[RMDB]
The record gives the reactivity of an RNA of 177 nucleotides to 2A3 and DMS. Reactivities are given for positions 27 through 126. For DMS the reverse transcriptase was MarathonRT. Reactivities are rounded to 0.1 and cut off at 0 and 3. The RNA was probed in 150 mM KOAc, 10 mM MgCl2 and 150 mM bicine (pH 8.5) at 24 C. Source: RMDB libraries RFM100 and RFMREP, as collected in RNAgym.
RNA sequence: GGGAACGACUCGAGUAGAGUCGAAAAGAUAAUUGGUUUUUGCGGCUGUCUGACCAGGCAGUGCCGCGAAGCUACCAUCUGCCGGAUUAUGGCUGAACGCCUCUAAGUCAGAAUCCGUACCGGAACGUCUUUUCUCAUCUUUCGAGAUGAGAAAAGAAAAAGAAACAACAACAACAAC
Reactivity to 2A3 in 0.01 (KOAc 150mM, MgCl2 10mM, bicine 150mM(pH8.5), 24C), signal-to-noise 8, nucleotides 027 to 126: g030a020u150a070a170u150u110g010g000u040u090u010u040u220g000c000g000g010c010u010g010u030c010u040g140a170c060c070a010g010g000c000a020g030u040g240c010c000g000c000g000a000a000g020c040u030a020c010c010a030u020c010u040g040c010c010g010g000a020u030u030a020u060g000g000c000u020g020a130a070c060g060c030c000u020c020u040a010a030g000u000c000a010g010a010a020u000c000c010g010u030a040c030c000g060g040a040a060c050g060
Reactivity to DMS in 0.01 (KOAc 150mM, MgCl2 10mM, bicine 150mM(pH8.5), 24C), signal-to-noise 6, nucleotides 027 to 126: g010a030u000a090a120u030u020g010g010u000u000u010u000u010g020c000g000g000c010u000g000u000c000u010g000a180c300c280a040g000g000c010a010g000u020g000c010c000g010c010g010a000a010g010c030u000a060c280c080a050u010c010u000g020c210c010g010g000a010u000u000a050u010g010g010c010u000g000a140a110c120g010c030c030u030c020u010a160a020g000u010c000a020g000a050a030u000c010c000g000u010a190c070c010g010g020a100a110c210g000